This 170-nucleotide RNA was probed chemically with DMS and 2A3. It was measured as part of the RMDB library 15KLIB. For 2A3, 8,540 sequencing reads were counted. The DMS profile rests on 13,382 reads. Conditions: 150 mM KOAc, 10 mM MgCl2 and 150 mM bicine (pH 8.5), 24 C. For DMS the reverse transcriptase was MarathonRT.
RNA sequence: GGGAACGACUCGAGUAGAGUCGAAAAGGGGACCAGUCCAGUCCGUGGGAACUACCCCGGAACUCCCGCUCUCCACACUCCUUCCCCCCGCGGGCCCCCCAAUUCAGAGCCAAGAACCCACCCAUCGCCGCCUCAGGGUUCGCCCUGAGGAAAAGAAACAACAACAACAAC
Reactivity to DMS in 0.01 (KOAc 150mM, MgCl2 10mM, bicine 150mM(pH8.5), 24C), signal-to-noise 5, nucleotides 027 to 129: g040g030g040g010a100c080c060a000g010u010c000c050a160g030u040c040c030g050u060g000g010g010a140a170c170u070a120c000c000c000c000g000g050a070a180c120u010c020c010c030g040c050u010c040u020c000c070a070c110a110c000u010c020c050u020u000c000c000c000c000c000c000g080c080g010g000g010c020c000c000c010c010c000a050a070u030u040c110a130g030a110g030c050c080a120a110g000a150a060c040c040c020a200c040c020c020a090u030c060g050c050c120g060
Reactivity to 2A3 in 0.01 (KOAc 150mM, MgCl2 10mM, bicine 150mM(pH8.5), 24C), signal-to-noise 3, nucleotides 027 to 129: g010g000g000g020a020c010c060a020g000u010c010c010a010g040u030c020c030g090u210g000g000g020a090a090c050u080a080c050c000c000c000g000g010a060a030c020u030c000c000c000g020c000u020c000u000c000c020a040c000a060c050u020c000c010u040u110c000c000c030c000c000c000g010c020g010g030g010c000c000c000c000c000c000a030a000u080u060c030a020g010a000g010c000c000a060a020g060a070a030c000c000c000a020c000c010c000a060u110c050g010c060c000g010